[RMDB]
Conditions: 150 mM KOAc, 10 mM MgCl2 and 150 mM bicine (pH 8.5), 24 C.
Structure probing data (DMS and 2A3) for a 177-nucleotide construct.
The 2A3 profile rests on 1,359 reads.
2A3 adducts were read by reverse transcription with SuperScript II with manganese.

RNA sequence: GGGAACGACUCGAGUAGAGUCGAAAAAUGCCACAGUGGGGAUGGAGGCCGGGCCGUGGCCAGAGCAGAUACGUAGGCCCAUGAAAUUGAUGAACUGAGAGUUGCUCGCAGUCCUCAGCGCACCAUCUACUUACGCGGUGUUCGCACCGCGUAAGUAAAAAGAAACAACAACAACAAC
Reactivity to DMS in 0.01 (KOAc 150mM, MgCl2 10mM, bicine 150mM(pH8.5), 24C), signal-to-noise 2, nucleotides 027 to 126: a040u020g020c000c040a060c110a020g010u000g000g000g020g010a080u030g000g020a180g000g020c030c060g000g000g040c000c000g000u100g000g000c040c080a080g010a040g030c090a060g000a100u000a030c100g010u010a120g000g000c030c000c020a060u010g010a060a030a090u040u020g040a100u010g000a120a100c040u000g000a080g000a150g040u010u000g010c020u040c060g000c040a050g030u000c000c000u000c040a060g050c120g000c050a050c070c020a030u030c070
Reactivity to 2A3 in 0.01 (KOAc 150mM, MgCl2 10mM, bicine 150mM(pH8.5), 24C), signal-to-noise 2, nucleotides 027 to 126: a000u190g020c020c010a060c030a000g080u020g020g000g000g020a050u080g010g010a060g030g050c030c000g000g000g000c000c020g040u050g000g010c000c010a000g000a000g050c040a030g000a020u070a110c000g030u080a080g070g000c000c030c000a020u140g030a020a180a100u120u160g030a060u070g050a070a030c020u010g000a000g000a000g140u090u130g010c040u050c030g000c000a000g030u010c000c030u020c020a000g010c010g000c000a010c030c010a040u030c000